[RMDB]
RNA sequence: GGGAACGACUCGAGUAGAGUCGAAAAGUGUCGCUGAGCACCACGUCGUUGCCGAGGUAUCGGCUAUUGCGGUGGUUGUCGUUGAUGUCCUGCGCGGUGACCGCCGAGCGCACCCACUGCAAGGUUGAAUUCUCUUCCUUUUCGAAGGAAGAGAAUUAAAAGAAACAACAACAACAAC
Reactivity to DMS in 0.01 (KOAc 150mM, MgCl2 10mM, bicine 150mM(pH8.5), 24C), signal-to-noise 5, nucleotides 027 to 126: g010u010g010u000c040g010c050u010g000a130g020c060a080c020c050a060c070g010u000c060g000u010u000g010c010c010g000a050g010g020u010a090u000c010g010g010c020u000a030u000u000g010c000g010g010u000g010g010u000u000g010u000c030g010u000u000g020a100u010g010u000c030c030u000g010c090g000c030g010g000u000g000a060c060c030g000c020c020g000a050g000c050g010c060a100c050c030c010a070c090u000g010c060a060a080g010g010u000u010g000
Reactivity to 2A3 in 0.01 (KOAc 150mM, MgCl2 10mM, bicine 150mM(pH8.5), 24C), signal-to-noise 4, nucleotides 027 to 126: g060u050g040u050c030g000c170u100g050a020g020c030a010c020c010a030c030g100u080c020g020u050u080g010c000c020g020a040g140g090u240a160u240c010g020g000c030u060a150u040u140g040c030g030g050u030g020g010u020u030g050u030c030g000u060u200g080a110u110g060u020c010c020u040g010c040g000c020g020g040u030g030a060c030c020g000c020c010g030a030g000c010g000c010a040c020c000c010a020c020u070g000c020a060a030g070g000u040u100g060
The data come from the RNA Mapping Database (RMDB), library OK2TRN. This 177-nucleotide RNA was probed chemically with DMS and 2A3. The DMS profile rests on 15,499 reads. The RNA was probed in 150 mM KOAc, 10 mM MgCl2 and 150 mM bicine (pH 8.5) at 24 C. For 2A3, 7,264 sequencing reads were counted.